The record gives the reactivity of an RNA of 170 nucleotides to DMS and 2A3. DMS (dimethyl sulfate) methylates the pairing face of unpaired adenines and cytosines. DMS adducts were read by reverse transcription with MarathonRT. For 2A3, 48,456 sequencing reads were counted. The DMS profile rests on 38,890 reads. The reactions ran in a buffer of 150 mM KOAc, 10 mM MgCl2 and 150 mM bicine (pH 8.5), at 24 C.

RNA sequence: GGGAACGACUCGAGUAGAGUCGAAAACGUCCGGGAGAAUGGAGAUUCGGGAACGUGAAGCAUGGUGGGGACGAAGCCCCCUCCGGGCGCUCCCCUCGGAUCUCCGCCGGGUGGGUUCACAUCCCCAAGCCCAUAGCCUUCGGGCUAUGGAAAAGAAACAACAACAACAAC
Reactivity to DMS in 0.01 (KOAc 150mM, MgCl2 10mM, bicine 150mM(pH8.5), 24C), signal-to-noise 7, nucleotides 027 to 129: c040g000u030c000c010g010g020g030a150g050a100a120u130g000g000a040g040a040u050u000c000g000g030g010a060a040c100g020u070g000a050a300g030c020a040u020g030g030u000g010g010g020g010a080c130g060a090a080g000c110c000c010c000c010u010c000c010g050g000g030c050g000c000u030c000c040c040c000u000c010g000g040a020u020c000u000c000c000g030c030c020g020g020g020u020g020g000g000u000u030c080a110c090a140u030c000c010c010c120a090a090g020c070
Reactivity to 2A3 in 0.01 (KOAc 150mM, MgCl2 10mM, bicine 150mM(pH8.5), 24C), signal-to-noise 9, nucleotides 027 to 129: c010g010u000c000c000g010g030g050a280g120a140a200u290g010g000a000g000a010u000u010c000g000g000g020a120a090c060g080u170g100a080a020g020c020a020u050g000g020u020g010g010g010g010a030c140g110a080a060g060c000c000c000c000c000u000c000c000g030g060g010c050g010c030u010c000c000c000c000u010c010g000g000a000u000c000u010c000c000g000c000c000g000g000g010u060g010g020g000u080u100c090a050c020a140u090c020c000c000c000a040a020g030c000